RNA sequence: GGGAACGACUCGAGUAGAGUCGAAAAGAUAUGGAUCCGUGGGUUCGCGCAUGGCAAGGUUUGAGUGUCGGAAACGACAUGUAAGACUGAUGACCCAUGCGCGAACCGUAACAUCGGAUCCUAAGUCCUCUAUGCUGCUGUUCGCAGCAGCAUAGAGAAAAGAAACAACAACAACAAC
Reactivity to DMS in 0.01 (KOAc 150mM, MgCl2 10mM, bicine 150mM(pH8.5), 24C), signal-to-noise 2, nucleotides 027 to 126: g040a100u010a300u000g030g000a010u000c000c010g000u000g010g000g020u000u000c000g040c000g000c030a000u030g000g000c020a070a140g030g030u000u000u000g000a300g000u000g010u010c010g040g000a250a180a300c000g030a010c010a030u000g000u020a300a120g000a010c010u010g000a070u000g010a170c300c010c000a010u000g020c000g000c000g000a000a000c000c000g030u000a010a100c210a090u000c000g030g000a030u000c020c000u010a060a100g000u000c050
This 177-nucleotide RNA was probed chemically with DMS.
The RNA was probed in 150 mM KOAc, 10 mM MgCl2 and 150 mM bicine (pH 8.5) at 24 C.
For DMS the reverse transcriptase was MarathonRT.